RNA sequence: GGGAACGACUCGAGUAGAGUCGAAAAUAUUACAUCUUCGGAUGUAAUAACUGGUGGUGGCUGGCUUGUUGCUAGUGGCGCAACUGUUGCCAUGACUGCCCAAUCGCUCUGAAUUCGUUCAGAGCAAUAUUAACGGAGUCUUCGGACUCCGUUAAUAAAAAGAAACAACAACAACAAC
Reactivity to DMS in 0.01 (KOAc 150mM, MgCl2 10mM, bicine 150mM(pH8.5), 24C), signal-to-noise 2, nucleotides 027 to 126: u010a000u000u000a000c000a010u000c000u000u010c220g030g000a020u010g000u000a000a000u000a020a140c160u010g000g010u000g040g040u000g000g010c010u000g000g000c070u010u000g010u000u000g020c000u010a160g040u030g020g010c120g010c000a010a010c040u000g010u010u010g000c000c010a000u000g000a080c010u000g000c020c000c030a070a110u010c140g000c000u000c000u000g010a020a020u000u010c200g010u010u000c000a010g010a010g010c000a030a010
Reactivity to 2A3 in 0.01 (KOAc 150mM, MgCl2 10mM, bicine 150mM(pH8.5), 24C), signal-to-noise 2, nucleotides 027 to 126: u020a000u000u010a000c000a010u000c000u030u070c230g160g000a010u000g010u010a000a000u010a000a050c110u120g060g040u070g010g000u010g040g010c030u010g010g030c030u090u100g010u040u020g040c040u020a110g250u100g300g000c110g030c010a000a010c010u010g150u220u080g000c010c000a020u070g080a050c020u020g030c000c000c000a040a080u160c110g000c000u010c010u010g000a010a020u040u040c150g050u070u000c040a000g000a010g030c000a010a000
Source: RMDB library M2PK50, as collected in RNAgym. An RNA of 177 nucleotides, treated with DMS and 2A3 and read out base by base. Values cover nucleotides 27 to 126. 2A3 adducts were read by reverse transcription with SuperScript II with manganese. Conditions: 150 mM KOAc, 10 mM MgCl2 and 150 mM bicine (pH 8.5), 24 C.